[RMDB]
RNA sequence: GGGAACGACUCGAGUAGAGUCGAAAAGAUAUGGAACCGUGACUACAGCAACAGCGUAAAUCGGAAACGAUUUACGACAUGCUGAGUCCGGUUCCUAAGUCAAAAGAGAACGGUUCGCCGUUCUCAAGACCAGUCUUACGUUCGCGUAAGACUGGUCAAAAGAAACAACAACAACAAC
Reactivity to DMS in 0.01 (KOAc 150mM, MgCl2 10mM, bicine 150mM(pH8.5), 24C), signal-to-noise 1, nucleotides 027 to 126: g000a110u000a300u010g000g010a000a000c000c010g000u010g040a010c000u010a220c010a010g000c010a030a220c250a140g000c000g000u000a000a000a030u000c010g000g000a120a090a240c000g000a000u000u000u020a000c000g000a050c180a220u000g000c000u040g000a090g000u000c010c000g010g000u000u000c000c000u000a030a110g000u000c010a070a140a010a100g020a010g010a000a010c000g000g020u000u040c250g000c010c000g020u000u000c000u000c000a030a100
Reactivity to 2A3 in 0.01 (KOAc 150mM, MgCl2 10mM, bicine 150mM(pH8.5), 24C), signal-to-noise 2, nucleotides 027 to 126: g010a040u080a080u140g000g020a000a000c030c030g040u300g040a020c040u300a300c160a030g000c010a010a180c000a150g090c000g000u000a000a000a000u000c000g040g000a030a070a020c020g000a000u000u000u000a000c010g030a020c030a030u100g030c020u000g010a000g000u030c000c000g030g000u000u000c000c000u000a020a000g000u030c020a030a050a040a150g000a010g010a010a000c000g010g090u080u140c300g100c160c010g000u010u000c000u000c000a000a000